An RNA of 177 nucleotides, treated with 2A3 and DMS and read out base by base. The DMS profile rests on 5,398 reads. The data come from the RNA Mapping Database (RMDB), library OK2TST. For 2A3 the reverse transcriptase was SuperScript II with manganese.
[RMDB]
RNA sequence: GGGAACGACUCGAGUAGAGUCGAAAAAGAAACACUAUACCUCCAGAAAAUCAUGGGUACUUGCUGGGGACAUUGGGGAUAUGCAUGAUUUGGAAAAGAAUGACUGCUUUUUUUGCUUAGAUGAGAAAACUAAAUGCUUUUUCGAAAGCAUUUAGUUAAAAGAAACAACAACAACAAC
Reactivity to 2A3 in 0.01 (KOAc 150mM, MgCl2 10mM, bicine 150mM(pH8.5), 24C), signal-to-noise 3, nucleotides 027 to 126: a000g050a010a040a000c020a020c040u050a030u100a160c000c020u000c020c000a030g090a060a100a000a030u050c020a040u060g050g040g000u030a040c020u080u090g030c030u060g020g020g030g020a010c030a040u080u090g020g000g010g010a010u050a020u140g030c020a010u020g000a070u080u060u050g040g020a080a100a020a000g070a050a020u050g030a050c020u020g000c000u100u080u050u030u030u100u090g020c010u070u070a030g040a160u150g080a050g110a080a260
Reactivity to DMS in 0.01 (KOAc 150mM, MgCl2 10mM, bicine 150mM(pH8.5), 24C), signal-to-noise 5, nucleotides 027 to 126: a070g010a110a080a090c040a070c090u010a120u010a100c080c020u010c030c030a120g010a090a080a080a060u010c060a040u000g010g000g020u000a050c090u000u000g000c060u010g000g000g010g010a080c060a040u010u010g020g000g010g010a110u000a040u010g010c020a030u010g000a090u000u010u000g000g000a060a040a060a080g000a080a060u010g000a090c110u000g010c010u000u000u000u000u010u000u000g010c060u000u000a080g010a070u000g000a110g000a100a060